This 177-nucleotide RNA was probed chemically with DMS and 2A3. For 2A3 the reverse transcriptase was SuperScript II with manganese. The 2A3 profile rests on 621 reads.
RNA sequence: GGGAACGACUCGAGUAGAGUCGAAAAGUGGGGCACAGAGUUGCAGUUGAUUGAAACUAAAUCAUGUGCGCUAAGUUGUCCCGAAAGUAUCUUUGGAUUUCUACAAAACAGUGUUCCUUCUUUAGGAUACCCCACGUACUUUCGAGUACGUGGGGUAAAAAGAAACAACAACAACAAC
Reactivity to DMS in 0.01 (KOAc 150mM, MgCl2 10mM, bicine 150mM(pH8.5), 24C), signal-to-noise 2, nucleotides 027 to 126: g000u050g030g000g000g000c000a020c040a080g020a000g010u000u040g040c010a000g010u000u000g040a010u000u000g020a130a150a240c200u050a080a040a000u010c010a020u000g000u000g000c000g000c000u000a060a050g030u010u020g030u000c000c000c000g000a020a090a150g000u000a040u020c050u000u000u000g000g000a020u000u000u010c000u000a000c000a000a130a080a180c300a050g010u000g000u000u000c000c000u000u000c120u000u010u040a100g020g000a090
Reactivity to 2A3 in 0.01 (KOAc 150mM, MgCl2 10mM, bicine 150mM(pH8.5), 24C), signal-to-noise 2, nucleotides 027 to 126: g070u070g000g000g000g000c030a000c000a000g160a020g140u130u300g110c000a130g060u000u000g030a000u000u010g090a150a220a040c120u170a020a040a030u050c020a000u090g060u000g230c000g000c000u000a000a030g000u050u060g000u000c000c000c000g000a010a000a010g050u170a010u100c020u000u040u080g060g000a030u230u130u230c000u030a050c000a010a090a010a000c060a140g000u000g000u000u000c000c020u000u040c060u070u080u060a090g010g050a020